[RMDB]
RNA sequence: GGGAACGACUCGAGUAGAGUCGAAAACCUAUCUGGUUUUUGUCACUACACUCACUAGUGAUUAUACGAUUACAGUCUUUGUUACUGUCAACCUUGCAAAAGUUUGCACUUAUGCCAUCUUUGCUUAUACGCGAUAGGUUCGCCUAUCGCAAAAGAAACAACAACAACAAC
Reactivity to DMS in 0.01 (KOAc 150mM, MgCl2 10mM, bicine 150mM(pH8.5), 24C), signal-to-noise 7, nucleotides 027 to 129: c000c010u000a000u050c090u050g040g050u010u000u070u060u080g020u020c010a050c020u030a020c210a170c180u080c140a160c200u030a070g000u000g020a060u000u000a070u000a060c180g010a060u060u070a000c030a030g010u020c040u040u060u040g040u060u000a000c030u040g040u000c010a080a040c000c000u030u060g040c000a000a010a020a030g000u000u000u000g020c060a100c280u000u030a060u040g020c050c080a050u000c060u010u030u050g010c020u080u030a120u030a080c180
Reactivity to 2A3 in 0.01 (KOAc 150mM, MgCl2 10mM, bicine 150mM(pH8.5), 24C), signal-to-noise 9, nucleotides 027 to 129: c000c000u020a110u080c110u120g070g090u030u050u010u100u150g020u000c000a000c010u020a010c080a060c110u200c030a080c070u020a000g010u000g020a000u050u090a060u020a070c100g040a030u090u100a020c000a000g020u010c080u050u300u240g140u220u110a020c000u010g000u020c030a050a050c030c040u050u100g000c000a010a020a020a070g010u010u010u020g020c030a040c100u200u140a110u260g020c010c000a000u000c010u020u000u010g010c000u110u090a130u030a150c110